[RMDB]
RNA sequence: GGGAACGACUCGAGUAGAGUCGAAAAGAUAUGGACCCAUAAAGACGCAGGGAGCUCCUCGGAAACGAGCCCUCCCUGAACUACGUCGAUAUGGGUCCUAAGUCAAAGGCGGUGUUCGCACCGCCAAUCACGCAUCUCAGUUCGCUGAGAUGCGUGAAAAAGAAACAACAACAACAAC
Reactivity to DMS in 0.01 (KOAc 150mM, MgCl2 10mM, bicine 150mM(pH8.5), 24C), signal-to-noise 1, nucleotides 027 to 126: g010a060u020a300u000g000g010a010c000c000c000a020u000a000a100a300g000a000c010g090c010a000g000g000g010a020g000c110u000c090c000u000c000g000g010a150a040a150c000g000a020g000c300c300c000u010c000c000c000u010g030a030a120c220u060a220c000g000u000c000g000a300u000a000u000g000g010g000u000c000c000u000a000a000g000u000c050a010a120a020g000g020c000g020g000u000g000u000u000c100g000c000a030c000c000g050c000c000a010a010